[RMDB]
RNA sequence: GGGAACGACUCGAGUAGAGUCGAAAAAACGGUUUGCACUUUAAUCGUCAAUGCGCAACAGUACAUACUCUGGUAACCGCCACCGAAGCCCAUACUGUAGCUUGUCCUUCCGUACGGAUUGCCAGCAUCUACAGCCUUAAUUCGUUAAGGCUGUAGAAAAAGAAACAACAACAACAAC
Reactivity to DMS in 0.01 (KOAc 150mM, MgCl2 10mM, bicine 150mM(pH8.5), 24C), signal-to-noise 7, nucleotides 027 to 126: a060a040c050g000g000u000u000u000g010c050a060c080u000u000u000a090a080u010c080g010u000c070a070a070u000g010c070g020c060a060a040c060a070g010u020a080c120a110u010a090c070u010c040u010g010g010u010a050a070c090c040g000c040c060a060c050c040g010a050a100g010c020c040c050a080u000a040c090u000g010u010a060g000c040u000u000g000u000c030c010u000u000c030c070g020u000a080c100g020g010a070u000u000g000c030c050a050g010c250a170
Reactivity to 2A3 in 0.01 (KOAc 150mM, MgCl2 10mM, bicine 150mM(pH8.5), 24C), signal-to-noise 3, nucleotides 027 to 126: a000a000c040g010g030u060u040u050g060c040a030c050u130u150u190a050a090u100c030g050u010c070a070a080u110g020c030g010c060a040a100c020a070g020u060a040c020a090u100a050c030u010c020u090g030g000u030a070a050c020c010g040c060c020a030c020c010g020a050a010g020c020c010c000a030u090a070c050u070g050u120a020g030c020u040u060g020u070c000c000u040u000c010c000g060u060a030c090g040g030a070u030u010g020c000c000a020g020c020a050
The data come from the RNA Mapping Database (RMDB), library OK2TRN. The record gives the reactivity of an RNA of 177 nucleotides to DMS and 2A3. DMS adducts were read by reverse transcription with MarathonRT. Reactivities are rounded to 0.1 and cut off at 0 and 3. For DMS, 8,762 sequencing reads were counted. The reactions ran in a buffer of 150 mM KOAc, 10 mM MgCl2 and 150 mM bicine (pH 8.5), at 24 C.